[RMDB]
An RNA of 177 nucleotides, treated with 2A3 and DMS and read out base by base. The DMS profile rests on 67,716 reads. It was measured as part of the RMDB library OK2TRN.
RNA sequence: GGGAACGACUCGAGUAGAGUCGAAAAGAACGAGUAGAACCCAAGGCGUGCAUCACGAAAUGGGAACAACUCGUAGGCGUGUUGUUCGCAUUUCGGAGAGAUCUGCCUUGCGAAAGGUACGCCAAGACUACUCGGAAGUAUUCGUACUUUCGAGUAGAAAAGAAACAACAACAACAAC
Reactivity to 2A3 in 0.01 (KOAc 150mM, MgCl2 10mM, bicine 150mM(pH8.5), 24C), signal-to-noise 9, nucleotides 027 to 126: g020a000a010c030g000a010g020u050a010g020a030a010c010c010c010a010a050g010g000c020g010u030g010c050a060u010c010a020c050g010a000a010a010u040g020g050g000a000a000c000a000a000c000u010c020g020u050a150g100g240c120g000u010g000u000u000g000u000u000c040g010c140a000u000u000u010c000g000g000a060g000a000g000a030u020c020u080g000c000c000u000u010g000c010g020a050a010a000g010g010u020a000c010g000c010c010a020a000g050a020
Reactivity to DMS in 0.01 (KOAc 150mM, MgCl2 10mM, bicine 150mM(pH8.5), 24C), signal-to-noise 9, nucleotides 027 to 126: g010a010a230c040g000a050g010u000a050g010a050a300c020c020c000a080a150g000g010c000g020u000g010c260a090u000c020a080c000g000a000a010a010u000g000g000g010a010a030c010a010a010c000u000c010g010u010a110g010g010c090g020u000g000u000u000g000u000u000c000g000c000a010u000u000u000c000g000g000a080g010a110g000a070u010c140u010g000c030c010u000u000g000c250g000a070a030a020g000g010u000a020c020g010c010c020a110a010g010a240